An RNA of 177 nucleotides, treated with DMS and 2A3 and read out base by base. The reactions ran in a buffer of 150 mM KOAc, 10 mM MgCl2 and 150 mM bicine (pH 8.5), at 24 C.
RNA sequence: GGGAACGACUCGAGUAGAGUCGAAAACACAUGCCAUCAUAUCGGUUAAGAACUCUUAACUCUGAUGGCUUUCGAGUUAUGUGGUGCAUUGAAGCUCUCCCUUCAAUUCAACGUUCCGUUCCGUCAAUAUCUUACGCUAAUUCGUUAGCGUAAGAUAAAAAGAAACAACAACAACAAC
Reactivity to DMS in 0.01 (KOAc 150mM, MgCl2 10mM, bicine 150mM(pH8.5), 24C), signal-to-noise 9, nucleotides 027 to 126: c070a090c120a070u010g010c000c000a010u000c000a050u010a110u010c290g010g010u000u000a010a020g000a250a170c300u010c010u000u000a000a010c000u000c090u000g010a010u000g000g000c010u000u000u000c040g010a060g010u000u000a040u010g020u000g010g020u000g010c100a040u000u000g000a040a030g010c090u000c100u010c110c120c010u000u000c030a030a040u000u000c040a050a110c030g010u000u000c030c010g000u000u000c010c010g000u000c090a060a120
Reactivity to 2A3 in 0.01 (KOAc 150mM, MgCl2 10mM, bicine 150mM(pH8.5), 24C), signal-to-noise 7, nucleotides 027 to 126: c060a000c010a060u130g020c030c000a010u000c000a010u080a070u270c080g020g000u010u010a020a020g080a300a270c060u030c000u300u010a010a000c010u000c020u080g010a010u000g000g000c000u010u020u000c020g000a010g010u090u070a090u160g080u100g060g040u050g000c020a030u000u060g040a030a010g020c020u020c040u050c050c000c030u000u030c030a040a050u040u050c020a040a020c040g030u060u030c020c010g000u040u000c020c010g080u090c030a060a050